Source: RMDB library OK1LIB, as collected in RNAgym. An RNA of 177 nucleotides, treated with DMS and 2A3 and read out base by base. For DMS the reverse transcriptase was MarathonRT.
RNA sequence: GGGAACGACUCGAGUAGAGUCGAAAACGUCGUGAACUAGCGACAAUGCCGUAGAUCUAUCGUUAUCUAACCGAAACAUCGUGACUAGUCGUAGAAUAGAACCAGGAGGGGGCGCUGCCAAACAAAGACGAAGUCUCAGAUUCGUCUGAGGCUUCGUAAAAGAAACAACAACAACAAC
Reactivity to DMS in 0.01 (KOAc 150mM, MgCl2 10mM, bicine 150mM(pH8.5), 24C), signal-to-noise 9, nucleotides 027 to 126: c120g010u010c030g020u010g000a110a100c130u030a110g000c030g010a030c030a090a080u020g010c030c030g000u020a060g000a050u010c030u020a090u020c100g000u010u020a060u010c050u020a050a110c080c030g010a090a060a100c170a070u010c040g010u010g000a070c030u000a060g010u000c020g020u000a060g010a060a090u020a060g010a080a100c050c040a060g000g010a070g000g000g000g000g000c030g000c020u000g000c020c050a050a070a060c130a050a090a060g010
Reactivity to 2A3 in 0.01 (KOAc 150mM, MgCl2 10mM, bicine 150mM(pH8.5), 24C), signal-to-noise 9, nucleotides 027 to 126: c050g010u010c010g010u020g080a120a060c070u030a070g020c000g020a010c020a020a040u090g030c010c010g030u030a030g010a110u000c020u040a100u060c080g060u110u040a050u050c050u040a030a090c030c030g040a070a040a030c040a060u060c030g050u030g040a050c040u030a020g040u050c030g030u030a030g030a090a040u080a070g050a040a040c030c010a020g030g030a030g010g010g000g000g000c020g000c020u030g000c000c000a060a070a050c030a050a120a010g070
For DMS, 40,189 sequencing reads were counted. The reactions ran in a buffer of 150 mM KOAc, 10 mM MgCl2 and 150 mM bicine (pH 8.5), at 24 C.